[RMDB]
RNA sequence: GGGAACGACUCGAGUAGAGUCGAAAAAUCAGCGGACGUCUGGAUGAGUUUCCCGGCUUCAGCAUCUCGACGUUCGUCCUGAGGCCGAAUUCGACGGGUUCCAGCCACAUCCGGUCGGGCGCCGCCGCACCCGGAGCAUGUUCGCAUGCUCCGGGUGAAAAGAAACAACAACAACAAC
Reactivity to 2A3 in 0.01 (KOAc 150mM, MgCl2 10mM, bicine 150mM(pH8.5), 24C), signal-to-noise 4, nucleotides 027 to 126: a010u070c020a000g020c010g000g000a030c010g000u000c020u050g030g000a030u010g020a030g070u040u070u060c020c010c010g020g000c040u060u050c030a060g040c020a080u030c040u030c050g010a020c020g040u050u110c040g030u050c000c010u030g010a030g030g000c010c010g050a060a090u110u070c070g030a020c040g020g010g000u090u060c050c010a010g020c050c020a090c000a050u010c030c020g080g010u050c000g010g030g010c020g000c010c000g000c000c000g000
Reactivity to DMS in 0.01 (KOAc 150mM, MgCl2 10mM, bicine 150mM(pH8.5), 24C), signal-to-noise 2, nucleotides 027 to 126: a080u020c080a100g000c000g000g010a030c010g000u000c000u010g020g020a020u000g000a140g020u000u000u000c020c000c000g000g000c030u000u000c050a140g000c050a010u010c000u040c270g000a010c050g060u000u010c040g020u020c100c050u000g000a070g010g000c000c040g030a120a070u020u020c070g000a080c130g010g010g010u010u040c000c060a080g010c040c040a050c090a040u000c050c000g010g000u040c060g020g000g010c070g000c030c030g000c020c040g020
This 177-nucleotide RNA was probed chemically with 2A3 and DMS.
The 2A3 profile rests on 4,071 reads.
Reactivities are rounded to 0.1 and cut off at 0 and 3.
The data come from the RNA Mapping Database (RMDB), library OK1LIB.
For 2A3 the reverse transcriptase was SuperScript II with manganese.
DMS adducts were read by reverse transcription with MarathonRT.